[RMDB]
Structure probing data (2A3 and DMS) for a 177-nucleotide construct. 2A3 adducts were read by reverse transcription with SuperScript II with manganese. For DMS the reverse transcriptase was MarathonRT. Conditions: 150 mM KOAc, 10 mM MgCl2 and 150 mM bicine (pH 8.5), 24 C.

RNA sequence: GGGAACGACUCGAGUAGAGUCGAAAAACAAUGCUCAGGGAUUUGGUAUUUUGCUGGCAUUCUCUCGGGUACUAGGUUGGCUGAGAAAAUUGUAGUGGAUUUUAAAUGACAUGAAAGUCCUGAGUCCACAUACUUGACUCUUCGGAGUCAAGUAUGUAAAAGAAACAACAACAACAAC
Reactivity to 2A3 in 0.01 (KOAc 150mM, MgCl2 10mM, bicine 150mM(pH8.5), 24C), signal-to-noise 1, nucleotides 027 to 126: a000c020a060a060u110g010c020u000c020a020g000g010g060a070u020u130u150g060g020u060a060u020u130u090u110g000c010u040g050g070c000a020u060u020c020u000c000u010c010g020g000g220u040a030c080u140a080g300g070u200u100g080g000c020u010g000a000g000a010a080a040a000u090u050g090u050a020g030u010g090g000a010u000u060u000u060a090a050a090u130g050a010c030a060u120g140a130a050a030g060u010c000c020u030g000a010g000u030c030c010
Reactivity to DMS in 0.01 (KOAc 150mM, MgCl2 10mM, bicine 150mM(pH8.5), 24C), signal-to-noise 2, nucleotides 027 to 126: a100c090a050a080u010g010c010u000c010a010g010g010g010a070u000u010u000g020g000u010a040u000u000u000u000g030c010u000g020g030c040a060u000u010c060u000c010u010c050g020g010g000u010a040c140u000a090g000g010u010u000g000g010c010u010g000a030g010a030a040a050a030u000u020g010u000a060g010u000g010g000a040u000u010u010u000a020a080a130u010g010a090c090a090u000g010a070a080a070g010u000c000c040u010g010a040g010u000c130c080